[RMDB]
RNA sequence: GGGAACGACUCGAGUAGAGUCGAAAACGAUGAGGGGAGAAGAGAAGUGGACAGGUGGGUCGAAGACGCCCGCCCCACGGCGUACGCCCGUCGCGUGUUUGCAUGCGGGGGUCAGACCCCCUUACCGCGUACCUCAGUAUUUCGAUACUGAGGUACGAAAAGAAACAACAACAACAAC
Reactivity to 2A3 in 0.01 (KOAc 150mM, MgCl2 10mM, bicine 150mM(pH8.5), 24C), signal-to-noise 4, nucleotides 027 to 126: c030g050a090u170g020a030g010g030g020g020a100g030a160a020g050a030g010a150a040g030u030g040g020a050c080a140g030g010u050g020g020g010u070c050g060a140a030g140a030c050g030c000c000c000g010c000c000c000c000a010c010g010g010c010g020u050a040c060g040c020c020c000g060u120c010g000c000g020u070g050u050u260u300g160c030a040u040g000c010g010g000g010g000g010u030c010a000g040a070c000c010c000c020c000u010u010a030c010c030g030
Reactivity to DMS in 0.01 (KOAc 150mM, MgCl2 10mM, bicine 150mM(pH8.5), 24C), signal-to-noise 6, nucleotides 027 to 126: c070g020a050u010g010a030g000g010g000g000a070g000a180a100g000a150g000a090a080g020u000g020g010a150c230a110g020g020u000g000g010g010u010c030g000a140a120g010a110c300g010c000c010c010g010c020c020c020c010a030c060g010g000c080g010u000a060c270g010c030c030c000g000u000c030g030c010g020u000g000u010u020u010g010c050a020u000g010c020g000g000g000g000g010u010c050a100g000a290c090c000c010c010c010u000u000a040c040c000g020
This 177-nucleotide RNA was probed chemically with 2A3 and DMS. For 2A3 the reverse transcriptase was SuperScript II with manganese. The RNA was probed in 150 mM KOAc, 10 mM MgCl2 and 150 mM bicine (pH 8.5) at 24 C. Source: RMDB library OK2TRN, as collected in RNAgym. 2A3 is a SHAPE reagent: it acylates the 2'-hydroxyl of flexible nucleotides of all four kinds. The DMS profile rests on 6,732 reads.